[RMDB]
RNA sequence: GGGAACGACUCGAGUAGAGUCGAAAAAAAAAUAACUAGCAUCCAUAAGACGAGGUAGAGCGCGCGCUCUACCAAAAGAUGUGUGUAAAAGCGCACGUGUAGGCGCGCAUACACGAAUAAACAAAAAUCUUAAUGUUAGGUUCGCCUAACAUUAAGAAAAAGAAACAACAACAACAAC
Reactivity to DMS in 0.01 (KOAc 150mM, MgCl2 10mM, bicine 150mM(pH8.5), 24C), signal-to-noise 2, nucleotides 027 to 126: a000a020a060a070a030u010a060a060c120u010a150g020c000a040u000c010c020a110u010a130a100g040a100c210g020a130g000g020u010a010g000a020g010c040g010c300g030c290g000c000u000c000u000a000c000c030a010a030a040a040g000a030u010g000u000g020u020g010u000a010a020a080a140g000c020g010c010a020c050g020u000g010u000a050g010g030c010g000c000g020c090a110u010a020c000a010c020g000a050a040u000a040a040a030c100a010a050a080a040a020
Reactivity to 2A3 in 0.01 (KOAc 150mM, MgCl2 10mM, bicine 150mM(pH8.5), 24C), signal-to-noise 1, nucleotides 027 to 126: a010a000a010a010a000u130a030a020c040u030a050g030c010a010u000c040c010a070u050a240a050g150a060c070g030a040g050g000u000a000g000a010g030c090g000c100g010c050g000c170u000c000u010a000c020c000a020a000a000a000g020a020u050g080u000g010u020g020u060a000a010a090a090g030c020g050c010a030c140g070u090g070u160a100g070g000c010g030c030g000c060a000u010a030c010a000c000g020a090a090u120a110a060a000c060a030a070a010a010a010
Structure probing data (DMS and 2A3) for a 177-nucleotide construct.
The DMS profile rests on 1,891 reads.
The reactions ran in a buffer of 150 mM KOAc, 10 mM MgCl2 and 150 mM bicine (pH 8.5), at 24 C.
High 2A3 reactivity points to a flexible backbone, as in loops and unpaired stretches.
For 2A3, 1,518 sequencing reads were counted.
For DMS the reverse transcriptase was MarathonRT.
In probing experiments dimethyl sulfate is read out at A N1 and C N3, which are open when not base-paired.